[RMDB]
RNA sequence: GGGAACGACUCGAGUAGAGUCGAAAAGAUAUGGAGGUCACCGAGCCUAACUUGGUCGAUGAGCCAACAGCUCGGAAACGAGCUGUUGGCGAGACCAACUUAGGCCUAGACAGUGACCUCCUAAGUCCUGUGUUUAAAACUUCGGUUUUAAACACAGAAAAGAAACAACAACAACAAC
Reactivity to DMS in 0.01 (KOAc 150mM, MgCl2 10mM, bicine 150mM(pH8.5), 24C), signal-to-noise 2, nucleotides 027 to 126: g010a050u000a160u000g000g020a050g010g010u000c000a020c070c030g030a120g000c000c000u010a000a000c220u010u000g020g000u000c010g030a210u020g000a290g040c000c030a030a020c000a020g000c000u010c000g000g010a010a060a160c000g050a040g040c000u010g010u020u010g000g070c000g020a030g000a000c000c000a000a000c070u000u000a010g010g010c000c300u000a060g020a060c300a090g020u000g000a010c000c010u020c000c000u000a000a060g000u000c020
Annotation
Structure probing data (DMS) for a 177-nucleotide construct. The RNA was probed in 150 mM KOAc, 10 mM MgCl2 and 150 mM bicine (pH 8.5) at 24 C. Source: RMDB library TTRINS, as collected in RNAgym.